An RNA of 207 nucleotides, treated with DMS and 2A3 and read out base by base. 2A3 is a SHAPE reagent: it acylates the 2'-hydroxyl of flexible nucleotides of all four kinds. Conditions: 150 mM KOAc, 10 mM MgCl2 and 150 mM bicine (pH 8.5), 24 C. The DMS profile rests on 11,611 reads.
RNA sequence: GGGAACGACUCGAGUAGAGUCGAAAAUGGAUUAGCAAAAAUGUCUGUUGAAGAACUUAUUCCAACACAUAUGCUUGAUGAUGACUUUGCAUCAUUGGUAUCUAAAAGACUAGUUAUGAUGAAUUGUGCAACUGAAAAUUAUGCAUCAGAAGUAGCAAGUAUGCAAUCAUUUCGAUGAUUGCAUACUAAAAGAAACAACAACAACAAC
Reactivity to DMS in 0.01 (KOAc 150mM, MgCl2 10mM, bicine 150mM(pH8.5), 24C), signal-to-noise 4, nucleotides 027 to 156: u000g020g020a070u000u010a060g010c020a020a060a070a120a110u000g020u000c050u000g030u000u000g020a060a080g010a090a110c090u010u000a100u000u000c020c020a030a080c060a060c040a110u000a090u000g020c080u000u010g030a090u000g010a070u000g010a120c100u000u010u010g000c030a050u000c050a070u010u000g020g010u000a050u000c060u010a080a100a180a160g010a040c020u000a040g020u000u000a090u010g020a070u000g000a040a040u000u000g010u010g010c090a060a300c120u020g010a060a050a060a110u000u000a040u000g000c010a040u000c020a050g000a040a060g000u000a030g020c060a070
Reactivity to 2A3 in 0.01 (KOAc 150mM, MgCl2 10mM, bicine 150mM(pH8.5), 24C), signal-to-noise 8, nucleotides 027 to 156: u070g030g010a030u060u090a030g020c040a000a040a120a070a080u070g030u050c070u030g030u040u040g060a120a100g030a100a050c050u130u090a100u190u090c050c020a060a010c040a020c000a070u100a020u150g030c020u090u130g030a020u010g010a010u010g030a110c030u060u070u180g010c010a000u010c000a010u030u050g050g000u060a030u030c040u100a110a060a050a030g100a060c040u040a020g090u100u030a030u090g040a020u020g010a030a110u080u080g020u040g020c020a060a050c040u060g060a040a020a030a040u190u120a110u150g020c000a010u000c020a010g070a100a010g030u040a010g040c030a040